Description: Conditions: 150 mM KOAc, 10 mM MgCl2 and 150 mM bicine (pH 8.5), 24 C. An RNA of 177 nucleotides, treated with DMS and read out base by base. DMS adducts were read by reverse transcription with MarathonRT. For DMS, 4,201 sequencing reads were counted.

RNA sequence: GGGAACGACUCGAGUAGAGUCGAAAACAAGAAAGGGGAGCCUCACCACGAGCUGCCCCCAGGGAGCACUAAGCGAGGUAAGCAAGCAGGACAAGAAGCGGUGGAGGAGACCAAGGGUGCAGUUAUGCCCUCUAUCAUCGUUCGCGAUGAUAGAGGGAAAAGAAACAACAACAACAAC
Reactivity to DMS in 0.01 (KOAc 150mM, MgCl2 10mM, bicine 150mM(pH8.5), 24C), signal-to-noise 3, nucleotides 027 to 126: c120a110a080g010a040a120a120g020g010g020g010a130g000c040c030u010c010a120c050c100a140c160g000a070g010c080u010g000c020c010c000c060c040a060g010g040g000a110g010c050a030c030u020a160a080g020c060g040a080g000g000u020a040a100g000c060a050a090g030c060a070g010g010a110c080a080a080g010a030a090g000c060g000g000u000g010g000a080g020g000a090g000a050c120c040a020a120g000g000g020u000g000c040a060g020u020u030a060u020g000